[RMDB]
The record gives the reactivity of an RNA of 207 nucleotides to 2A3 and DMS. DMS adducts were read by reverse transcription with MarathonRT. For DMS, 4,089 sequencing reads were counted. 2A3 adducts were read by reverse transcription with SuperScript II with manganese. For 2A3, 1,667 sequencing reads were counted. The data come from the RNA Mapping Database (RMDB), library OK3TST.
RNA sequence: GGGAACGACUCGAGUAGAGUCGAAAAGUAUAGCAUGACUGGCAAUGCGUAUACGAUGAAUCAGCCAGAAAAGAAUCCGUUGUGCGAAAGCACUUCGGUAAUGCAUAAUCGGUUCGAGUACAGCCCGGUACGAGAACCGUUGUUAGUACGGGCCAGACCCGUAUUAAAUGUUCGCAUUUAAUACGGGAAAAGAAACAACAACAACAAC
Reactivity to 2A3 in 0.01 (KOAc 150mM, MgCl2 10mM, bicine 150mM(pH8.5), 24C), signal-to-noise 2, nucleotides 027 to 156: g010u010a020u040a070g000c000a000u000g030a140c000u000g000g000c010a020a010u020g010c030g040u070a010u000a080c040g060a120u240g090a090a110u130c050a070g060c040c010a030g070a050a100a000a010g070a030a040u040c010c010g000u000u010g000u010g010c010g000a050a020a010g000c000a000c000u010u000c000g000g010u030a050a030u120g030c040a070u140a220a100u300c050g010g030u000u000c000g000a000g000u010a000c010a040g030c050c000c000g010g000u010a000c000g000a000g000a010a000c000c000g010u000u000g010u000u010a070g010u010a040c070g010g050g000c020c020a010g030a090
Reactivity to DMS in 0.01 (KOAc 150mM, MgCl2 10mM, bicine 150mM(pH8.5), 24C), signal-to-noise 3, nucleotides 027 to 156: g000u010a020u010a090g020c010a010u000g010a190c010u000g030g020c010a240a080u000g030c060g020u000a100u000a050c070g030a210u000g010a100a150u010c060a140g000c000c040a040g000a090a040a080a200g000a260a130u010c010c000g040u000u010g040u000g030c010g010a190a110a290g000c000a020c000u000u010c010g030g030u020a040a000u010g010c070a160u000a050a080u000c080g030g000u010u000c000g000a300g030u000a040c000a050g010c030c030c010g020g030u000a010c040g000a300g000a000a040c010c000g030u000u000g010u000u000a090g000u000a080c070g030g040g000c040c020a090g000a300